[RMDB]
RNA sequence: GGGAACGACUCGAGUAGAGUCGAAAAUAAUCAAUGCAGGUACUUCCCAGUGCAUUCAGAAUCUCAGCUAUGGACUGACAGGUCGUGGGAACCUCUUUACACGAUCACGUGAACUCUCUGGUGACCGGCAGUGAAUAACUUUCGAGUUAUUCACUGCAAAAGAAACAACAACAACAAC
Reactivity to DMS in 0.01 (KOAc 150mM, MgCl2 10mM, bicine 150mM(pH8.5), 24C), signal-to-noise 3, nucleotides 027 to 126: u010a140a110u010c130a040a000u000g040c050a070g000g000u000a070c110u000u000c010c000c000a190g030u000g010c030a030u000u000c170a070g000a070a100u000c050u000c020a030g020c040u020a080u000g020g010a070c060u000g040a090c130a070g000g000u010c030g030u010g000g010g010a080a070c150c060u000c060u010u000u000a120c010a040c030g020a030u000c030a080c150g020u010g000a080a060c100u000c040u000c020u000g000g020u000g000a080c120c050g010
Reactivity to 2A3 in 0.01 (KOAc 150mM, MgCl2 10mM, bicine 150mM(pH8.5), 24C), signal-to-noise 2, nucleotides 027 to 126: u100a000a060u140c070a030a030u080g000c000a010g070g040u060a050c030u010u010c000c000c020a010g040u040g000c010a010u040u090c010a030g140a210a130u060c030u000c050a020g000c040u090a090u190g040g020a100c000u030g010a010c020a050g000g000u020c020g020u030g000g030g040a070a050c010c050u110c040u050u140u110a040c030a000c010g040a050u040c040a010c130g060u050g020a030a020c000u020c000u000c020u040g060g000u040g040a040c020c000g050